[RMDB]
RNA sequence: GGGAACGACUCGAGUAGAGUCGAAAAACAUUGAAAAGUGAAAUGCGGCACGCGACGCCCAUGCAAAUGUGAUAAUUAGAAAGUCAUUAUGGCUGGCAAUCGUUGGCCAUCUAAUACCAAUGGGUGAACCUAGUACGUGGUUCGCCACGUACUAGGUAAAAGAAACAACAACAACAAC
Reactivity to 2A3 in 0.01 (KOAc 150mM, MgCl2 10mM, bicine 150mM(pH8.5), 24C), signal-to-noise 4, nucleotides 027 to 126: a000c000a040u100u160g100a070a060a040a020g120u060g080a090a080a100u090g040c020g040g010c090a010c100g020c010g030a010c030g030c000c000c010a010u040g000c020a020a170a140u090g040u020g040a060u080a160a040u040u110a070g180a130a100a030g010u030c020a040u020u150a000u080g030g000c010u000g000g000c000a010a180u220c140g000u020u020g010g020c000c000a000u000c010u050a040a010u020a090c010c020a070a030u010g010g040g000u040g010a010
Reactivity to DMS in 0.01 (KOAc 150mM, MgCl2 10mM, bicine 150mM(pH8.5), 24C), signal-to-noise 3, nucleotides 027 to 126: a110c100a070u010u000g030a030a020a130a080g020u000g000a080a030a070u000g000c080g000g000c020a070c110g030c050g000a100c100g000c070c000c030a000u020g010c110a070a090a070u020g010u030g000a040u000a030a020u040u030a080g000a100a110a160g000u000c090a090u010u020a060u020g000g010c020u010g000g000c050a090a070u010c170g000u000u000g000g000c000c030a080u010c070u000a050a040u020a090c110c050a060a080u000g000g000g030u010g020a080